[RMDB]
RNA sequence: GGGAACGACUCGAGUAGAGUCGAAAAGAUAUGGAGCCAGUACACGACGAAGAACUCGGAAACGAGGGAGUCGGUACUGGCUCCUAAGUCAAACGUUGGUAUCGUGGUUCGCCACGAUACCAACGAAGUUAAUAGGGAUCUUCGGAUCCCUAUUAACAAAAGAAACAACAACAACAAC
Reactivity to DMS in 0.01 (KOAc 150mM, MgCl2 10mM, bicine 150mM(pH8.5), 24C), signal-to-noise 3, nucleotides 027 to 126: g010a050u010a300u000g000g010a000g020c000c000a010g020u000a010c010a130c010g030a020c000g040a090a160g040a190a140c010u000c000g000g000a130a080a200c000g010a010g000g000g000a050g030u000c000g010g020u000a000c010u010g000g000c000u000c000c000u000a000a070g000u000c030a100a090a260c020g010u000u000g010g010u000a000u010c020g040u010g000g020u000u000c260g020c000c000a000c010g000a000u000a000c000c000a000a000c000g010a030a080
Reactivity to 2A3 in 0.01 (KOAc 150mM, MgCl2 10mM, bicine 150mM(pH8.5), 24C), signal-to-noise 1, nucleotides 027 to 126: g010a010u060a030u090g010g000a000g030c000c000a000g000u000a010c300a050c020g010a000c000g130a280a100g020a020a060c010u020c020g030g000a100a050a050c010g000a010g020g000g000a020g000u010c000g010g000u020a000c000u000g000g010c000u000c000c000u020a000a000g000u000c010a000a000a050c020g000u000u000g010g000u000a000u000c040g000u010g030g070u090u130c300g050c080c030a010c020g000a000u000a000c000c010a010a000c000g010a010a000
This 177-nucleotide RNA was probed chemically with DMS and 2A3. 2A3 adducts were read by reverse transcription with SuperScript II with manganese. For DMS the reverse transcriptase was MarathonRT. The RNA was probed in 150 mM KOAc, 10 mM MgCl2 and 150 mM bicine (pH 8.5) at 24 C.